[RMDB]
RNA sequence: GGGAACGACUCGAGUAGAGUCGAAAAGGGUCCCGCAGAACCCGAUGGAGUUCCCAACCUUCCCCUUACGGACAAAAGCUGGUCCCGAUAGGGGCACCCACAAUAGGAUGGCAAAAGGGGACUCGGGCAACUACCGAGUUCGCUCGGUAGAAAAGAAACAACAACAACAAC
Reactivity to 2A3 in 0.01 (KOAc 150mM, MgCl2 10mM, bicine 150mM(pH8.5), 24C), signal-to-noise 9, nucleotides 027 to 129: g050g020g010u040c010c020c000g010c010a050g040a070a060c000c000c020g010a030u140g180g060a060g020u020u020c000c000c000a010a080c020c010u070u090c000c000c000c000u010u020a010c010g010g000a000c020a030a210a030a030g110c130u150g100g020u000c010c010c010g060a080u110a090g010g000g000g000c000a020c000c020c000a060c030a100a100u090a180g070g020a080u060g080g000c040a020a050a090a110g010g000g000g000a010c000u000c000g000g010g000c020a050a030
Reactivity to DMS in 0.01 (KOAc 150mM, MgCl2 10mM, bicine 150mM(pH8.5), 24C), signal-to-noise 9, nucleotides 027 to 129: g000g000g010u000c020c020c080g010c120a090g020a110a110c010c000c010g030a110u050g050g020a110g000u010u000c040c010c000a090a130c080c060u030u020c000c010c010c010u000u050a290c300g010g000a040c050a080a070a110a090g030c140u040g030g010u000c010c000c000g020a130u020a030g010g000g020g000c110a020c030c000c020a070c130a110a080u020a120g000g020a070u030g000g000c100a030a060a070a070g020g030g030g010a040c040u000c030g000g000g020c090a110a120
An RNA of 170 nucleotides, treated with 2A3 and DMS and read out base by base. For DMS, 72,598 sequencing reads were counted. The reactions ran in a buffer of 150 mM KOAc, 10 mM MgCl2 and 150 mM bicine (pH 8.5), at 24 C. For DMS the reverse transcriptase was MarathonRT.